This 177-nucleotide RNA was probed chemically with DMS and 2A3. Source: RMDB library OK2TRN, as collected in RNAgym. The RNA was probed in 150 mM KOAc, 10 mM MgCl2 and 150 mM bicine (pH 8.5) at 24 C.
[RMDB]
RNA sequence: GGGAACGACUCGAGUAGAGUCGAAAAUGGCCUCAUCGCCGAGGUCGACCGCGGCACCUGGACACCCGCGCCGGUAUUCACCAUGAUUGCCCAGCGCGGCCGGGUCAGGCGCACAGAGAUGGAGAAGUAUCCAAUCAUCUUUCGAGAUGAUUGGAUAAAAAGAAACAACAACAACAAC
Reactivity to DMS in 0.01 (KOAc 150mM, MgCl2 10mM, bicine 150mM(pH8.5), 24C), signal-to-noise 6, nucleotides 027 to 126: u020g010g020c010c010u000c020a070u010c230g020c220c120g000a010g010g010u000c010g010a130c030c040g020c120g010g020c050a050c020c010u000g020g020a060c040a120c300c010c000g010c020g040c010c300g000g000u000a040u000u000c020a130c200c210a150u010g000a030u000u000g010c050c010c070a080g000c020g010c000g020g000c050c090g000g000g000u010c030a030g020g020c020g020c040a080c090a100g000a090g000a080u000g010g000a090g000a100a140g010
Reactivity to 2A3 in 0.01 (KOAc 150mM, MgCl2 10mM, bicine 150mM(pH8.5), 24C), signal-to-noise 3, nucleotides 027 to 126: u110g010g010c000c010u030c030a120u110c110g100c120c090g000a000g000g010u000c010g010a020c000c020g030c050g040g030c030a020c050c010u020g070g030a050c040a080c080c000c010g000c010g000c000c010g000g000u020a040u040u090c100a130c210c090a160u300g020a060u040u100g010c030c020c010a070g000c010g010c000g000g030c030c020g010g010g000u000c020a030g000g000c030g000c030a020c050a060g110a010g040a060u170g060g060a140g010a170a040g070